[RMDB]
RNA sequence: GGGAACGACUCGAGUAGAGUCGAAAAGAGUUUAAGGAGCUCGUGGCUGCUCAUGGCUUAAAAGGCAUAAUUCAAUCUUUACACAGAGACUAUGAUGAUCCUGAACUUUUAAAAGUUACUUUAGAAACAUGCUUAAUUUUGACGCGACACGAUGACACGGAGGACUAUACUUCGGUAUAGUCCUCCGAAAAGAAACAACAACAACAAC
Reactivity to 2A3 in 0.01 (KOAc 150mM, MgCl2 10mM, bicine 150mM(pH8.5), 24C), signal-to-noise 1, nucleotides 027 to 156: g060a040g000u090u060u060a140a050g060g000a000g000c020u000c110g020u040g030g030c070u140g020c000u040c000a040u020g000g000c010u100u120a050a060a050a050g070g000c010a010u050a130a080u090u030c020a030a080u040c010u010u100u070a210c170a000c000a010g110a000g040a040c020u040a090u050g040a020u050g000a010u020c000c000u000g010a040a000c010u170u240u020u140a060a030a050a000g020u040u060a050c020u140u160u160a050g050a020a020a040c010a010u090g050c000u010u010a130a100u210u170u160u200g000a020c060g000c040g060a020c000a000c090g090a100u070g000a020c010a000
This 207-nucleotide RNA was probed chemically with 2A3. The RNA was probed in 150 mM KOAc, 10 mM MgCl2 and 150 mM bicine (pH 8.5) at 24 C. Values cover nucleotides 27 to 156. For 2A3 the reverse transcriptase was SuperScript II with manganese. The 2A3 profile rests on 354 reads.